[RMDB]
RNA sequence: GGGAACGACUCGAGUAGAGUCGAAAACCUUGGUCCUUCGGGACCAAGGAAACCCGAAGACAUUCAGACUGUGGGCGGCGAGACAAUCCACAAGAGUCGCUAAAAGCGUCUGGUUCGCCAGACGCAACUUUAAGUACACCUUCGGGUGUACUUAAAGAAAAGAAACAACAACAACAAC
Reactivity to 2A3 in 0.01 (KOAc 150mM, MgCl2 10mM, bicine 150mM(pH8.5), 24C), signal-to-noise 3, nucleotides 027 to 126: c000c000u000u000g020g000u010c000c020u030u080c250g080g000g000a000c000c000a000a000g000g000a050a030a000c030c000c010g040a040a030g090a030c070a040u160u160c040a090g040a110c050u070g010u030g040g000g030c040g030g040c060g030a030g020a060c050a060a060u020c010c000a020c000a020a060g100a020g050u000c020g020c080u080a040a030a050a120g010c010g000u000c010u000g000g050u020u020c200g020c020c000a000g000a000c000g000c000a000a000
Reactivity to DMS in 0.01 (KOAc 150mM, MgCl2 10mM, bicine 150mM(pH8.5), 24C), signal-to-noise 3, nucleotides 027 to 126: c000c000u000u020g000g000u000c010c000u000u020c220g030g010g030a010c010c000a010a010g000g000a010a060a110c010c000c010g030a120a070g000a130c140a070u000u000c130a130g000a100c090u010g010u000g000g010g000c300g000g010c040g010a090g020a150c070a070a120u000c020c030a040c070a060a150g010a160g000u000c010g010c180u000a040a060a120a100g020c000g000u000c000u000g000g000u000u030c190g010c000c010a040g000a010c010g000c010a000a010
An RNA of 177 nucleotides, treated with 2A3 and DMS and read out base by base. It was measured as part of the RMDB library M2PK50. 2A3 adducts were read by reverse transcription with SuperScript II with manganese. The RNA was probed in 150 mM KOAc, 10 mM MgCl2 and 150 mM bicine (pH 8.5) at 24 C.